RNA sequence: GGGAACGACUCGAGUAGAGUCGAAAACGCACUCGCAGCUUAAUAACCUGCGCUUAGCCCUUCUCCCCCAGCUUGCCUGUGUCCUAGGGAAUUGGAAGGUCAUCCUUCACAGGAUCGUGUGGAAGUCAUUACUCGUGAGUGUUCGCACUCACGAGAAUCAAAUAUUAUGCUUCGGCAUAAUAUUUGAAAAAGAAACAACAACAACAAC
Reactivity to DMS in 0.01 (KOAc 150mM, MgCl2 10mM, bicine 150mM(pH8.5), 24C), signal-to-noise 4, nucleotides 027 to 156: c090g010c040a100c070u000c020g020c030a020g020c000u000u010a150a120u000a130a120c290c000u000g010c010g020c090u000u000a100g010c010c020c030u000u000c040u000c040c000c010c030c030a110g030c030u000u010g020c010c020u000g030u010g000u000c060c030u000a090g010g020g000a080a150u000u000g020g020a080a080g010g020u000c110a130u000c020c010u000u000c040a100c060a080g000g020a060u000c070g020u000g010u000g000g000a080a270g010u010c030a080u010u000a140c000u000c000g020u000g000a020g040u010g000u000u010c300g020c020a030c000u000c000a000c010g000a000g000a030a060
Reactivity to 2A3 in 0.01 (KOAc 150mM, MgCl2 10mM, bicine 150mM(pH8.5), 24C), signal-to-noise 3, nucleotides 027 to 156: c010g000c010a030c030u020c010g000c010a010g000c000u030u050a040a020u040a060a050c010c000u000g020c010g020c040u060u100a050g000c010c020c000u070u050c140u060c010c020c010c000c010a020g010c010u010u110g030c000c000u010g000u010g010u050c000c040u030a060g000g000g030a030a090u140u080g060g000a060a030g050g020u100c030a080u120c010c000u040u060c020a020c000a030g010g020a050u070c040g040u050g010u040g070g030a050a020g020u040c050a090u030u160a080c000u000c000g000u000g000a010g010u010g020u050u110c170g020c060a000c000u000c000a000c000g000a000g020a000a010
This 207-nucleotide RNA was probed chemically with DMS and 2A3. For DMS the reverse transcriptase was MarathonRT.